Overview: Structure probing data (2A3 and DMS) for a 177-nucleotide construct. Conditions: 150 mM KOAc, 10 mM MgCl2 and 150 mM bicine (pH 8.5), 24 C. For 2A3 the reverse transcriptase was SuperScript II with manganese. Values cover nucleotides 27 to 126.

RNA sequence: GGGAACGACUCGAGUAGAGUCGAAAACUAGUGGCUCUGAGUGAGGGUUCCGUCCCCUCUCAUCCAUUACAAACGCCCUUUGCCAGUUCCGUCUGGUGAAGUGUGUGGAAGUCAAGUUCCGUCUUGUUAAGUAGAUCUGGUUCGCCAGAUCUACUUAAAAAGAAACAACAACAACAAC
Reactivity to 2A3 in 0.01 (KOAc 150mM, MgCl2 10mM, bicine 150mM(pH8.5), 24C), signal-to-noise 5, nucleotides 027 to 126: c030u010a010g010u000g010g000c000u000c000u010g010a000g020u030g020a300g050g020g000u290u280c050c030g300u300c000c010c000c010u000c000u000c000a090u260c010c000a000u000u000a010c030a010a100a000c010g000c010c000c000u010u000u000g000c000c000a010g000u120u300c080c090g140u200c110u010g000g000u010g010a000a010g000u000g000u010g010u020g020g050a100a030g030u090c090a120a050g010u020u010c010c010g040u010c010u030u050g030u030
Reactivity to DMS in 0.01 (KOAc 150mM, MgCl2 10mM, bicine 150mM(pH8.5), 24C), signal-to-noise 4, nucleotides 027 to 126: c100u000a020g020u020g000g010c000u010c010u000g000a020g010u010g000a140g020g010g000u010u040c240c180g000u020c030c000c010c020u000c000u000c010a010u060c000c010a010u000u000a050c180a060a110a050c010g000c000c030c000u000u000u000g010c000c000a010g010u010u030c290c210g020u040c010u000g000g000u000g010a000a010g010u010g020u000g020u000g000g020a100a130g010u000c130a120a070g000u010u000c030c020g000u000c020u000u000g000u020